[RMDB]
Background: An RNA of 207 nucleotides, treated with 2A3 and read out base by base. It was measured as part of the RMDB library OK3TST.
RNA sequence: GGGAACGACUCGAGUAGAGUCGAAAAACGGUCUCGACCUGUAUUAGUCUUGGAGAGAAUGUUCGUUUCAGACCAAUAGUAGGUCGUGCCCAAUAUGACCCAUCAUACUCAGCGAACAUGGGGAGGCGGUUGAUUGUAUGUUGGGCAUGGCGUUGACUCACCUUCGAUGGUUCGCCAUCGAAGGUGAAAAAGAAACAACAACAACAAC
Reactivity to 2A3 in 0.01 (KOAc 150mM, MgCl2 10mM, bicine 150mM(pH8.5), 24C), signal-to-noise 1, nucleotides 027 to 156: a010c080g000g000u020c020u010c100g070a040c000c000u010g060u040a080u010u020a020g040u030c070u070u260g000g000a070g010a010g030a170a150u250g100u140u180c050g000u100u030u130c050a020g000a000c000c000a000a020u050a070g200u010a000g030g000u000c000g000u000g010c000c000c060a000a030u070a050u220g290a300c000c000c010a020u040c000a000u040a040c030u000c030a000g010c000g120a100a070c160a240u220g000g000g120g000a040g050g110c010g050g000u030u000g030a210u060u190g040u020a050u050g050u010u010g030g000g010c050a030u020g010g000c010g030u050u100g050a010c040